[RMDB]
RNA sequence: GGGAACGACUCGAGUAGAGUCGAAAAAUGGUAGUUAGUCUACUCGCUAUCCUAGUUACUUUGGAGUAAUCUAAAGUGUGUGUAAACGGGCGAAAGUCUGUAAAAUAGUGGGGACAUAGGGUCAACAAGAACUAGUAGACCUUCGGGUCUACUAGAACACAAUGAUCUUCUUCGGAAGAUCAUUGUGAAAAGAAACAACAACAACAAC
Reactivity to 2A3 in 0.01 (KOAc 150mM, MgCl2 10mM, bicine 150mM(pH8.5), 24C), signal-to-noise 3, nucleotides 027 to 156: a000u090g010g000u030a040g030u100u060a040g050u050c020u050a040c000u040c020g000c020u020a040u130c010c010u070a130g050u130u100a040c030u030u030u030g040g020a040g030u130a070a130u000c010u020a010a030a030g030u030g010u010g000u010g030u070a060a120a040c030g010g020g000c020g030a030a000a000g010u000c020u040g050u060a030a070a040a020u040a010g010u040g000g010g010g010a000c040a060u080a060g040g010g010u040c010a010a020c020a110a060g090a070a010c010u000a010g000u000a000g010a000c000c000u030u020c150g040g000g000u000c000u000a000c000u000a000g000a000a000
Reactivity to DMS in 0.01 (KOAc 150mM, MgCl2 10mM, bicine 150mM(pH8.5), 24C), signal-to-noise 2, nucleotides 027 to 156: a090u010g010g000u000a020g020u000u000a110g020u000c030u000a040c010u000c040g050c030u000a050u000c040c040u000a130g020u000u000a030c050u000u000u010g030g010a060g000u000a120a130u000c020u000a010a010a020g020u000g030u000g000u010g020u000a050a080a050c030g020g000g000c010g020a100a080a160g010u000c010u000g010u000a050a060a090a080u010a050g010u000g020g020g030g010a090c080a110u000a080g020g020g010u000c040a060a080c060a080a120g010a080a160c000u000a030g010u010a000g000a030c000c000u000u000c300g030g030g030u010c010u010a010c000u010a000g000a030a110
Source information:
The data come from the RNA Mapping Database (RMDB), library M2RFPK. Chemical mapping of a 207-nucleotide RNA with 2A3 and DMS. For 2A3 the reverse transcriptase was SuperScript II with manganese. Reactivities are given for positions 27 through 156.